[RMDB]
RNA sequence: GGGAACGACUCGAGUAGAGUCGAAAAGUUAGCUCUUCGGAGCUAACAAAAAGAUAUGGAGCGUUGUAGGACAUGCUGGAUAAGGGUCGGAAACGACCCGUAACAGCAACAGCCUACACCGCUCCUAAGUCAAAAAAAGACCAUUUCGAUGGUCUAAGCAGAAUAAGCGAUUCGUCGCUUAUUCUGCAAAAGAAACAACAACAACAAC
Reactivity to 2A3 in 0.01 (KOAc 150mM, MgCl2 10mM, bicine 150mM(pH8.5), 24C), signal-to-noise 1, nucleotides 027 to 156: g000u000u000a010g000c000u000c000u030u130c300g060g010a000g020c000u000a000a000c000a000a000a010a000a000g010a020u040a010u090g010g000a010g020c010g010u000u000g000u000a000g000g000a060c090a240u040g000c000u000g000g000a000u000a030a010g000g030g000u010c010g010g020a040a080a050c000g020a010c000c000c000g000u000a010a000c000a000g010c000a010a000c030a000g010c010c000u000a000c000a000c010c000g000c010u010c000c000u000a010a000g000u000c010a000a070a030a070a000a030a000g040a000c050c010a010u050u090u050c200g200a040u070g040g000u000c020u050a030a040